[RMDB]
RNA sequence: GGGAACGACUCGAGUAGAGUCGAAAAACUUGCCUGAAGAUGAGGAUUCCCUGGAGACUUGAUCUCCCUGAAGGGUCGUUCGAGACCAGGACGUUGAUAGGCUGGGUGUGGAAGCGCAGUAAUGCGUGAGCACAUCAGAGUUCGCUCUGAUGUGCUCAAAAGAAACAACAACAACAAC
Reactivity to 2A3 in 0.01 (KOAc 150mM, MgCl2 10mM, bicine 150mM(pH8.5), 24C), signal-to-noise 2, nucleotides 027 to 126: a000c020u060u120g070c010c010u020g090a140a040g050a070u060g020a000g040g060a050u070u160c000c010c000u000g000g100a100g020a060c060u090u160g070a160u160c010u000c030c000c010u160g070a050a140g040g000g010u020c080g090u000u030c040g050a050g020a140c040c030a000g000g020a030c000g050u040u070g070a090u060a060g010g000c060u020g040g000g020u100g000u050g070g060a080a050g010c010g000c020a020g020u140a120a040u050g000c010g030u030
Reactivity to DMS in 0.01 (KOAc 150mM, MgCl2 10mM, bicine 150mM(pH8.5), 24C), signal-to-noise 3, nucleotides 027 to 126: a070c070u010u010g010c020c010u010g010a080a130g000a060u000g000a090g010g010a140u000u000c060c010c020u000g020g030a120g040a050c030u000u000g010a100u000c040u000c020c040c120u000g010a140a130g020g010g010u000c070g000u000u000c050g010a140g020a070c040c030a030g010g000a120c050g020u000u000g000a120u030a040g010g000c040u000g000g000g020u010g030u000g000g020a060a120g000c030g020c030a020g000u010a080a080u000g000c020g000u010
Chemical mapping of a 177-nucleotide RNA with 2A3 and DMS. For DMS the reverse transcriptase was MarathonRT. The reactions ran in a buffer of 150 mM KOAc, 10 mM MgCl2 and 150 mM bicine (pH 8.5), at 24 C. For 2A3 the reverse transcriptase was SuperScript II with manganese. For DMS, 3,129 sequencing reads were counted. The 2A3 profile rests on 1,217 reads.